[RMDB]
RNA sequence: GGGAACGACUCGAGUAGAGUCGAAAAACAUAGGUUGGGCCAUAGGCGCUGCGGUUCAUCAUCUUGCCCUCGCCAGGACCGCUCCCGUUCUACUACUUGGCGUGGCGGAUACCGGGUUGGAAAACAAAACCAUUGAUUCUUUCGAGAAUCAAUGGUUAAAAGAAACAACAACAACAAC
Reactivity to 2A3 in 0.01 (KOAc 150mM, MgCl2 10mM, bicine 150mM(pH8.5), 24C), signal-to-noise 1, nucleotides 027 to 126: a010c060a040u210a040g060g060u040u090g020g000g000c000c030a080u040a100g070g020c050g000c040u020g010c050g030g000u140u060c080a070u050c010a000u010c050u020u120g010c000c020c000u010c010g000c010c000a040g010g020a040c000c070g010c020u040c020c010c000g040u100u050c030u110a180c050u030a070c010u070u090g030g000c030g010u040g010g010c000g020g000a020u050a060c020c040g000g050g000u020u110g110g050a030a060a020a060c070a020a120
Reactivity to DMS in 0.01 (KOAc 150mM, MgCl2 10mM, bicine 150mM(pH8.5), 24C), signal-to-noise 4, nucleotides 027 to 126: a100c110a090u010a070g010g010u000u010g000g000g010c030c040a080u010a110g010g000c020g010c060u010g010c080g010g000u000u010c060a080u010c080a030u000c050u000u010g000c020c020c020u000c050g020c010c020a080g010g000a130c060c030g000c050u010c020c020c010g000u010u010c070u000a100c150u000a080c070u000u000g010g010c050g000u010g000g010c010g000g000a090u000a060c070c030g000g020g000u000u000g010g010a060a050a080a070c160a070a070

Source: RMDB library M2PK90, as collected in RNAgym. Structure probing data (2A3 and DMS) for a 177-nucleotide construct. 2A3 adducts were read by reverse transcription with SuperScript II with manganese. Reactivities are rounded to 0.1 and cut off at 0 and 3. For DMS, 4,348 sequencing reads were counted.